[RMDB]
Chemical mapping of a 207-nucleotide RNA with 2A3 and DMS. DMS adducts were read by reverse transcription with MarathonRT. For 2A3, 2,460 sequencing reads were counted. The DMS profile rests on 2,184 reads. The data come from the RNA Mapping Database (RMDB), library RNAMAK.
RNA sequence: GGGAACGACUCGAGUAGAGUCGAAAACGCUGGGCCUGGAAGCGAGCCAUAGGGAGCUGAAGCGCGCACGGCGAAGAACUAUGGGUCGCCCAGGCCUGUGCUGAAGCGCGCACGGCAACCGAAAGGUGCGAUCGGAAGGUUGUUCGCAACCUUCCAAACCCUAUUACGAUUUCGAUCGUAAUAGGGUAAAAGAAACAACAACAACAAC
Reactivity to 2A3 in 0.01 (KOAc 150mM, MgCl2 10mM, bicine 150mM(pH8.5), 24C), signal-to-noise 2, nucleotides 027 to 156: c040g020c070u140g020g030g000c000c000u010g060g000a200a170g000c010g030a030g110c000c000a000u020a010g020g010g010a020g000c000u000g020a200a060g010c000g000c000g000c000a010c020g020g020c000g040a100a010g000a000a000c010u010a000u030g000g040g100u040c000g000c000c000c000a010g000g020c010c000u000g000u010g000c030u090g040a080a030g010c000g000c000g010c010a010c030g050g030c030a080a070c010c010g020a090a040a020g000g000u020g020c030g020a090u200c090g030g010a000a000g010g000u020u020g020u050u030c100g060c080a000a000c010c000u000u010c010c000a010a000
Reactivity to DMS in 0.01 (KOAc 150mM, MgCl2 10mM, bicine 150mM(pH8.5), 24C), signal-to-noise 1, nucleotides 027 to 156: c090g050c020u000g020g000g000c010c000u010g000g010a160a150g040c000g000a020g000c000c020a100u020a040g000g030g010a100g060c000u060g020a070a050g000c000g040c030g030c040a300c040g000g000c020g000a090a160g000a180a300c010u000a030u020g020g010g010u000c020g020c020c010c000a060g030g020c030c060u000g010u000g080c020u000g020a250a020g000c020g000c000g010c000a180c020g030g020c000a090a300c020c000g020a070a130a200g000g000u010g010c040g010a150u000c070g020g020a100a020g000g020u010u000g000u000u000c180g030c020a020a020c010c040u000u000c010c000a000a070